Structure probing data (2A3 and DMS) for a 207-nucleotide construct. The RNA was probed in 150 mM KOAc, 10 mM MgCl2 and 150 mM bicine (pH 8.5) at 24 C. For DMS the reverse transcriptase was MarathonRT. The 2A3 profile rests on 362 reads.
RNA sequence: GGGAACGACUCGAGUAGAGUCGAAAAUACUCAGUACAAGGUUCCAGAUGGGUUGAAGGAUGUGGAUUUGGACGAAGAAUUGCUCCACAUUUCUCAGAACAACCUUGCUAUCAUGAAUGCAAUCCAUGCGGGAACGUCUAAGUUAGGAUUAAUAAUAUGCAUAUGCUAUCUUCGGAUAGCAUAUGCAAAAAGAAACAACAACAACAAC
Reactivity to 2A3 in 0.01 (KOAc 150mM, MgCl2 10mM, bicine 150mM(pH8.5), 24C), signal-to-noise 1, nucleotides 027 to 156: u120a000c000u050c070a010g010u100a140c020a010a110g140g000u000u020c030c000a020g050a130u080g040g020g010u000u100g050a080a000g000g050a050u020g010u030g000g000a020u060u000u290g080g020a080c020g050a010a120g050a080a020u180u050g020c000u000c020c000a000c000a000u000u030u060c120u000c070a130g050a120a020c090a010a060c020c060u000u140g020c010u000a060u220c010a100u260g160a180a060u160g000c000a000a000u000c000c030a000u090g100c000g040g000g060a030a000c000g000u040c060u180a020a000g010u030u050a120g000g130a050u130u120a060a030u280a080a070u300a050
Reactivity to DMS in 0.01 (KOAc 150mM, MgCl2 10mM, bicine 150mM(pH8.5), 24C), signal-to-noise 2, nucleotides 027 to 156: u020a140c020u010c060a150g020u000a100c040a000a070g060g010u000u000c000c040a170g000a170u010g010g020g040u000u000g010a150a080g020g000a000u000g020u000g000g010a120u000u000u020g000g020a300c030g020a150a130g010a030a080u000u000g040c160u040c030c020a010c000a090u010u000u020c030u010c010a160g010a120a110c020a030a060c000c020u010u030g010c040u010a140u000c110a040u000g010a060a100u000g000c020a110a100u010c010c030a050u000g030c130g000g000g030a000a030c060g000u000c010u010a120a190g010u010u000a080g010g010a220u010u010a000a080u020a110a100u000a150